[RMDB]
RNA sequence: GGGAACGACUCGAGUAGAGUCGAAAAGAUAUGGAAUACAGCUCGGCAAGUUCGAUGAAAAAAUAAUAGGGUCGGAAACGACCCUAUUAUUUUGGAGAACUUGACAACGAGACUGUAUUCCUAAGUCCAUUAAUAUCACGUUCGCGUGAUAUUAAUGAAAAGAAACAACAACAACAAC
Reactivity to DMS in 0.01 (KOAc 150mM, MgCl2 10mM, bicine 150mM(pH8.5), 24C), signal-to-noise 4, nucleotides 027 to 126: g010a130u010a300u010g010g000a020a000u000a010c010a010g000c000u000c000g000g010c020a030a010g010u000u000c000g000a130u010g010a000a030a020a010a010a000u000a000a000u000a010g000g010g030u010c000g010g010a130a120a200c000g010a020c000c000c000u000a000u000u000a000u000u000u000u010g000g000a070g000a010a010c000u000u000g000a080c140a100a180c020g000a030g000a150c000u000g010u000a000u000u000c000c000u000a020a090g000u000c050